Chemical mapping of a 177-nucleotide RNA with 2A3 and DMS. 2A3 adducts were read by reverse transcription with SuperScript II with manganese. The 2A3 profile rests on 3,891 reads. For DMS the reverse transcriptase was MarathonRT.
RNA sequence: GGGAACGACUCGAGUAGAGUCGAAAAUAACGUACUUUCGAGUACGUUAAGUCUCCCGGCGCUAGCAGCGCUGAAGAGAAGAUGGAGGAGCUGGUGGUGGAAUUAGGGGGGGAUUCGUCCCCCCCAACAUCCAUUUUCUUUUCGAAGAAAAUGGAUGAAAAGAAACAACAACAACAAC
Reactivity to 2A3 in 0.01 (KOAc 150mM, MgCl2 10mM, bicine 150mM(pH8.5), 24C), signal-to-noise 3, nucleotides 027 to 126: u020a000a000c010g010u010a000c000u060u060u150c250g020a010g000u000a000c000g010u000u000a000a010g030u020c040u010c040c020c010g030g010c000g000c020u120a100g050c100a020g010c040g000c040u010g030a110a020g030a010g010a070a020g030a050u120g020g030a050g020g000a040g050c060u080g020g050u040g010g070u040g020g060a090a110u120u070a300g030g000g000g000g000g000g000a010u020u010c040g030u020c020c000c000c000c000c020c010a000a000
Reactivity to DMS in 0.01 (KOAc 150mM, MgCl2 10mM, bicine 150mM(pH8.5), 24C), signal-to-noise 7, nucleotides 027 to 126: u000a000a000c000g010u000a000c010u000u000u010c170g000a020g020u000a000c000g000u000u000a010a080g000u000c080u000c010c040c010g010g000c010g010c010u000a110g010c150a190g010c020g000c010u000g010a100a080g000a060g000a050a050g000a060u010g010g010a120g000g010a070g010c070u000g010g020u000g010g020u000g010g000a090a090u000u010a110g000g010g000g010g010g000g010a030u000u010c130g000u000c000c000c000c000c000c000c000a000a030